[RMDB]
RNA sequence: GGGAACGACUCGAGUAGAGUCGAAAAUUCGAGGGCCGGGAGCUCCUGGUCAUCGAGCUGUCCGACAACCCUGGCGUCCAUGAGCCUGGUGAGCCUGAAUUUAAAUACAUUGGGAAUAUGCAUGGGAACUCUAACUACACUUCGGUGUAGUUAGAGUAAAAGAAACAACAACAACAAC
Reactivity to DMS in 0.01 (KOAc 150mM, MgCl2 10mM, bicine 150mM(pH8.5), 24C), signal-to-noise 5, nucleotides 027 to 126: u010u000c010g010a020g020g020g020c010c000g000g020g010a300g010c300u020c000c010u000g010g020u000c010a060u000c020g000a010g000c130u000g010u000c020c000g020a070c020a060a060c100c000c020u000g000g010c040g020u010c010c010a040u000g010a150g010c020c010u000g000g000u000g010a100g010c010c020u000g000a060a090u000u010u010a090a080a090u010a080c160a100u000u010g000g000g000a090a120u010a070u000g010c020a040u000g000g000g010a150
Reactivity to 2A3 in 0.01 (KOAc 150mM, MgCl2 10mM, bicine 150mM(pH8.5), 24C), signal-to-noise 4, nucleotides 027 to 126: u020u000c000g010a020g000g000g040c020c000g030g040g000a090g190c120u160c110c020u020g000g000u040c010a010u010c000g000a010g000c030u020g070u000c000c010g050a050c030a080a020c010c000c040u040g010g020c010g020u040c000c000a010u030g010a010g020c000c010u010g020g010u050g030a020g040c000c020u050g080a120a110u110u150u210a160a170a060u210a060c090a070u060u130g050g010g070a030a070u150a060u220g050c000a000u020g010g000g010a030